An RNA of 177 nucleotides, treated with DMS and 2A3 and read out base by base. In probing experiments dimethyl sulfate is read out at A N1 and C N3, which are open when not base-paired. It was measured as part of the RMDB library OK1LIB. Values cover nucleotides 27 to 126. As a SHAPE reagent, 2A3 marks flexible, mostly unpaired nucleotides at the ribose 2'-OH. DMS adducts were read by reverse transcription with MarathonRT.
[RMDB]
RNA sequence: GGGAACGACUCGAGUAGAGUCGAAAACAUGCAGGCGUCUGGUGCUAGGCGUGCAGCGCCAGGGUCAGCACUGCGUGCUGAGGCGGCUGAAGGGCCGCUGUCACGCCCGGCGAUUGGCUUACACGACGCAUGAGGCGAUCUUCGGGUUGCUUCGUGCAAAAGAAACAACAACAACAAC
Reactivity to DMS in 0.01 (KOAc 150mM, MgCl2 10mM, bicine 150mM(pH8.5), 24C), signal-to-noise 9, nucleotides 027 to 126: c040a050u020g010c030a050g000g000c020g010u020c010u000g010g010u010g000c010u000a090g000g010c010g010u000g010c120a040g010c010g010c000c000a030g010g000g000u030c070a060g000c030a060c010u010g010c100g020u000g010c060u000g000a180g000g010c000g000g000c010u000g010a170a100g010g000g010c010c000g000c000u000g000u020c050a050c100g010c010c000c020g000g010c050g000a080u020u020g000g010c050u000u020a080c090a090c100g000a120c180
Reactivity to 2A3 in 0.01 (KOAc 150mM, MgCl2 10mM, bicine 150mM(pH8.5), 24C), signal-to-noise 9, nucleotides 027 to 126: c010a010u050g000c010a000g030g000c000g010u020c010u030g020g010u040g010c010u020a040g040g020c020g040u040g010c020a000g010c000g000c000c000a020g030g010g060u140c020a010g010c010a020c010u080g010c020g010u010g000c010u040g020a020g010g010c000g000g000c000u010g080a040a040g060g020g000c000c000g000c000u000g020u020c010a000c020g000c000c000c000g020g010c030g080a140u040u080g040g000c010u010u040a020c060a010c040g080a010c040
The reactions ran in a buffer of 150 mM KOAc, 10 mM MgCl2 and 150 mM bicine (pH 8.5), at 24 C.